[RMDB]
RNA sequence: GGGAACGACUCGAGUAGAGUCGAAAAGACACCCUCGCCCUCCUGUCAAACUCCGAAUCCACCGCCGCCGUAGAUGGGCGGAGUCAGGGGCAGGGGGUAAGCUCCUGUUCCGAGAGGGAGACAACCCAAUUAUACCCUAUUUCGAUAGGGUAUAAUUAAAAGAAACAACAACAACAAC
Reactivity to DMS in 0.01 (KOAc 150mM, MgCl2 10mM, bicine 150mM(pH8.5), 24C), signal-to-noise 9, nucleotides 027 to 126: g000a150c160a110c010c000c000u000c030g000c050c030c010u010c040c020u010g010u010c090a070a110a070c020u000c010c010g010a090a090u020c020c020a040c040c030g010c040c060g010c060c050g010u010a080g010a080u010g000g000g010c010g000g010a030g010u010c120a100g010g000g000g000c010a030g010g010g000g000g010u020a040a110g010c030u000c010c010u000g000u010u010c020c020g010a130g010a110g000g000g000a120g010a180c130a070a090c010c010c020
Reactivity to 2A3 in 0.01 (KOAc 150mM, MgCl2 10mM, bicine 150mM(pH8.5), 24C), signal-to-noise 9, nucleotides 027 to 126: g030a010c030a050c030c010c000u010c020g020c000c000c000u090c010c010u030g030u070c050a080a040a040c010u010c010c000g040a060a110u050c010c010a020c020c030g080c030c030g070c030c030g070u060a040g020a130u060g020g010g020c010g000g000a010g010u030c060a040g020g020g000g000c010a060g030g010g000g000g010u030a060a040g040c010u020c010c020u060g060u160u070c050c030g100a090g010a030g080g030g000a020g010a010c040a020a060c010c010c000
Chemical mapping of a 177-nucleotide RNA with DMS and 2A3. Values are in units of 0.01, from 0 to 300, in steps of 10. Values cover nucleotides 27 to 126.